[RMDB]
RNA sequence: GGGAACGACUCGAGUAGAGUCGAAAAGAUAUGGACUCUUCCCCGCCUGAAUUUAUAGGGAGCUAAAUGUCGGAAACGACAUAUAGCGAAGAACUAUAAAUUCAGGCGGGGACGGGAGUCCUAAGUCCGGUCUAAUAAACUUCGGUUUAUUAGACCGAAAAGAAACAACAACAACAAC
Reactivity to DMS in 0.01 (KOAc 150mM, MgCl2 10mM, bicine 150mM(pH8.5), 24C), signal-to-noise 1, nucleotides 027 to 126: g000a080u000a300u000g010g000a020c010u000c000u000u010c000c000c030c000g010c000c000u000g000a010a020u000u000u000a010u010a040g000g030g020a050g010c000u000a000a100a000u000g030u010c000g000g000a100a130a240c020g000a020c000a010u000a060u000a020g040c000g000a090a120g000a080a250c010u000a000u000a000a020a000u000u000c000a000g000g030c000g000g000g000g000a000c300g010g020g010a050g010u000c000c020u000a010a100g000u000c040
Reactivity to 2A3 in 0.01 (KOAc 150mM, MgCl2 10mM, bicine 150mM(pH8.5), 24C), signal-to-noise 1, nucleotides 027 to 126: g020a040u070a080u300g020g000a010c010u040c010u070u070c000c000c000c000g040c010c010u000g000a010a010u000u000u010a020u010a010g040g020g000a030g000c000u010a050a130a010u010g000u010c000g020g080a080a060a090c010g020a000c020a000u090a010u010a080g020c030g080a170a030g000a020a010c010u000a000u000a040a000a000u000u010c010a000g000g010c020g010g000g000g000a000c020g000g000g000a000g020u000c000c000u010a120a020g090u030c050